Chemical mapping of a 177-nucleotide RNA with DMS and 2A3. Values are in units of 0.01, from 0 to 300, in steps of 10. For DMS the reverse transcriptase was MarathonRT. Source: RMDB library RFMREP, as collected in RNAgym. Values cover nucleotides 27 to 126. In probing experiments dimethyl sulfate is read out at A N1 and C N3, which are open when not base-paired.
[RMDB]
RNA sequence: GGGAACGACUCGAGUAGAGUCGAAAAAAGAGGAAGAGAGGGCCUAAGAGCAGUGGGAAUGGGAACAUGGAGGAAAGCCUAUCCUGUUUGUUUCCUCCUCCAGAAACAGAGGUGGAAGCUUGGUCCGGCUCAAUAAAUAGUUCGCUAUUUAUUGAGCAAAAGAAACAACAACAACAAC
Reactivity to DMS in 0.01 (KOAc 150mM, MgCl2 10mM, bicine 150mM(pH8.5), 24C), signal-to-noise 5, nucleotides 027 to 126: a060a060g010a050g000g000a070a050g000a090g000a050g020g010g010c100c060u000a090a070g000a100g020c070a040g020u010g000g000g000a070a060u010g010g010g000a050a040c110a050u010g000g000a030g000g000a040a070a110g010c070c050u000a090u000c020c020u000g010u000u010u000g000u000u000u000c010c010u000c030c010u000c020c060a090g020a080a070a070c250a080g000a030g000g000u000g000g000a050a040g010c050u010u000g020g010u010c050c100g020
Reactivity to 2A3 in 0.01 (KOAc 150mM, MgCl2 10mM, bicine 150mM(pH8.5), 24C), signal-to-noise 5, nucleotides 027 to 126: a000a010g090a030g030g030a040a020g050a010g010a040g010g000g000c000c020u080a090a020g040a010g030c050a030g030u090g050g030g020a070a090u080g020g010g000a020a040c030a060u090g040g010a030g020g040a070a040a000g030c010c010u030a050u040c000c020u090g140u120u120u040g010u000u020u000c000c000u000c010c000u000c020c020a070g160a040a090a010c050a020g010a010g010g020u010g020g000a010a010g010c040u040u070g030g020u020c020c040g040